[RMDB]
RNA sequence: GGGAACGACUCGAGUAGAGUCGAAAAGUCAGCCGAUAUGGAGUAAACUCCGUUGAUCUAUACUCCCCACCGCUUUCGGAAACGAAAGCGAGGUAUAGGGAGGAGCACUACUCCUAAGUCAUAGUUACGUGAGUAAUACCUUCGGGUAUUACUCACGAAAAGAAACAACAACAACAAC
Reactivity to DMS in 0.01 (KOAc 150mM, MgCl2 10mM, bicine 150mM(pH8.5), 24C), signal-to-noise 3, nucleotides 027 to 126: g020u000c090a180g020c100c030g030a060u010a300u000g000g010a040g000u000a020a110a200c000u010c010c010g000u010u040g000a020u020c000u000a000u000a010c040u000c100c020c020c010a300c100c020g000c000u000u000u000c010g000g000a090a150a090c000g000a000a010a020g010c020g000a000g000g010u000a000u000a000g000g010g000a010g020g000a020g000c050a110c140u000a030c000u020c000c000u020a080a210g010u000c050a120u000a110g000u000u000a110
Reactivity to 2A3 in 0.01 (KOAc 150mM, MgCl2 10mM, bicine 150mM(pH8.5), 24C), signal-to-noise 1, nucleotides 027 to 126: g090u070c050a100g110c070c050g050a030u070a110u290g010g000a010g010u020a050a300a170c000u000c030c010g070u150u060g010a010u000c000u000a000u020a000c010u100c000c000c000c010a010c000c010g010c000u040u000u010c000g060g030a090a040a020c000g000a010a010a000g010c030g000a010g000g000u000a000u000a030g020g000g010a020g020g000a000g020c060a050c110u000a030c040u000c020c010u020a070a030g060u040c060a150u160a290g160u130u240a100